An RNA of 177 nucleotides, treated with DMS and 2A3 and read out base by base.
As a SHAPE reagent, 2A3 marks flexible, mostly unpaired nucleotides at the ribose 2'-OH.
For DMS the reverse transcriptase was MarathonRT.
It was measured as part of the RMDB library OK1LIB.
The 2A3 profile rests on 13,739 reads.
For 2A3 the reverse transcriptase was SuperScript II with manganese.
Conditions: 150 mM KOAc, 10 mM MgCl2 and 150 mM bicine (pH 8.5), 24 C.

RNA sequence: GGGAACGACUCGAGUAGAGUCGAAAAAGCGCUAGAGAUGUACACGGGUUUGCCCCCUUAUCUGUGUACUAUCUCUUUUCAUACCCCAGGGAUAGGUUGAGUGGGGGCGGUCUGGGCUUGGCGCGAAGUGUAUUUAAUAAUUCGUUAUUAAAUACACAAAAGAAACAACAACAACAAC
Reactivity to DMS in 0.01 (KOAc 150mM, MgCl2 10mM, bicine 150mM(pH8.5), 24C), signal-to-noise 6, nucleotides 027 to 126: a140g010c050g000c020u010a020g010a020g000a050u010g010u020a070c040a060c010g010g010g000u000u010u030g030c020c000c000c000c020u000u030a030u010c010u000g020u020g010u020a040c000u030a000u000c000u000c010u000u000u030u020c100a090u030a180c080c010c010c030a050g000g000g010a090u020a040g020g000u020u010g000a070g010u010g010g010g000g000g020c010g000g010u010c020u000g010g010g000c070u000u010g010g010c010g010c030g010a050a100
Reactivity to 2A3 in 0.01 (KOAc 150mM, MgCl2 10mM, bicine 150mM(pH8.5), 24C), signal-to-noise 9, nucleotides 027 to 126: a000g020c020g000c020u070a030g020a020g020a210u080g090u180a070c140a050c050g010g000g030u040u090u300g030c010c000c000c010c010u020u130a120u130c020u030g140u030g050u130a020c000u000a010u000c000u010c000u050u030u020u010c040a050u080a080c000c000c000c020a000g030g000g020a030u040a030g050g070u100u160g050a060g030u070g010g020g000g010g000c010g000g020u000c010u010g020g010g010c010u010u020g000g000c010g000c010g020a110a040